[RMDB]
RNA sequence: GGGAACGACUCGAGUAGAGUCGAAAAGUCAUGCCUUCGGGCAUGACAGGUACCGAGAGGUACCAAAUAGCGUACAGUAGACACAGACUGUACGCUAAAAAAGUGUGUGUUCAAUAAGGUCCAAUUGAACACACACUAAAAUGGACCAAGUGUGUGAUACCUAAUAUUUAUUCGUAAAUAUUAGGUAAAAAGAAACAACAACAACAAC
Reactivity to 2A3 in 0.01 (KOAc 150mM, MgCl2 10mM, bicine 150mM(pH8.5), 24C), signal-to-noise 6, nucleotides 027 to 156: g000u010c000a000u000g000c010c000u050u070c220g050g000g020c000a000u000g000a010c000a000g000g000u000a010c010c010g020a030g010a020g060g000u010a010c000c000a030a060a030u060a000g000c000g000u000a000c000a000g020u030a010g050a110c010a010c010a060g050a020c010u000g000u000a000c000g000c000u000a000a010a000a000a010a010g000u000g000u000g000u000g000u000u000c020a030a030u110a190a110g100g030u090c050c030a030a040u020u010g000a000a000c000a000c000a000c000a000c000u000a000a000a000a020u090g030g030a020c020c060a060a080g060u030g000u000g010u020g060a040
Reactivity to DMS in 0.01 (KOAc 150mM, MgCl2 10mM, bicine 150mM(pH8.5), 24C), signal-to-noise 3, nucleotides 027 to 156: g010u000c000a010u010g020c010c000u000u000c300g060g000g000c010a010u000g010a010c000a000g000g010u000a020c000c000g030a300g010a300g010g000u000a010c010c000a010a050a070u000a030g020c020g040u000a010c010a000g020u000a140g000a220c090a080c090a120g020a060c000u000g020u000a000c000g000c000u000a000a010a060a100a050a030g000u000g030u000g020u000g020u000u000c010a020a020u000a060a050g020g010u010c080c040a240a080u000u000g000a030a020c000a000c000a000c000a000c000u000a000a020a070a110u000g010g010a150c060c040a090a150g040u000g010u000g010u010g000a300